[RMDB]
Structure probing data (DMS and 2A3) for a 207-nucleotide construct. The DMS profile rests on 11,852 reads. The reactions ran in a buffer of 150 mM KOAc, 10 mM MgCl2 and 150 mM bicine (pH 8.5), at 24 C. For 2A3 the reverse transcriptase was SuperScript II with manganese.
RNA sequence: GGGAACGACUCGAGUAGAGUCGAAAACUUUCUGUAGUUCUGUUGCUAGUGUCCCCACAAUGUGUCCACAGGGAACUUUAUAAAAUGCGAAUCUGUACAGGUCAUUAGUACAUGCAUGUGCGCACACACACAAAAACACAGACUUUCUCUCACACACAACACGACAUAAUUUCGAUUAUGUCGUGUUAAAAGAAACAACAACAACAAC
Reactivity to DMS in 0.01 (KOAc 150mM, MgCl2 10mM, bicine 150mM(pH8.5), 24C), signal-to-noise 5, nucleotides 027 to 156: c050u000u000u000c040u010g030u000a090g010u000u000c050u000g010u010u000g000c010u000a140g030u010g010u000c000c010c010c020a090c110a080a060u000g020u000g010u000c020c030a080c090a130g010g010g010a090a080c080u000u000u000a130u010a090a070a090a070u000g020c030g010a100a110u000c050u010g040u000a080c050a100g020g040u000c060a120u000u020a100g030u000a050c050a060u000g010c050a070u000g020u000g010c030g030c050a080c040a040c040a030c030a060c060a050a040a060a110a070c040a060c050a090g000a060c070u000u000u000c030u000c020u010c030a090c040a080c070a100c050
Reactivity to 2A3 in 0.01 (KOAc 150mM, MgCl2 10mM, bicine 150mM(pH8.5), 24C), signal-to-noise 8, nucleotides 027 to 156: c020u050u120u020c050u080g090u060a080g020u050u040c030u080g080u090u060g030c050u060a070g040u030g040u070c020c020c040c000a040c020a040a160u110g040u030g030u060c050c020a050c030a070g020g020g040a030a030c010u040u160u010a210u100a090a160a040a030u090g030c030g050a050a060u040c050u050g020u040a030c020a050g010g130u100c040a090u030u140a040g020u040a020c020a050u070g020c010a040u070g030u030g060c040g010c020a010c010a000c000a000c000a000c020a030a070a020a070a010c030a000c000a030g030a040c020u020u090u010c040u010c000u030c010a040c070a030c090a000c010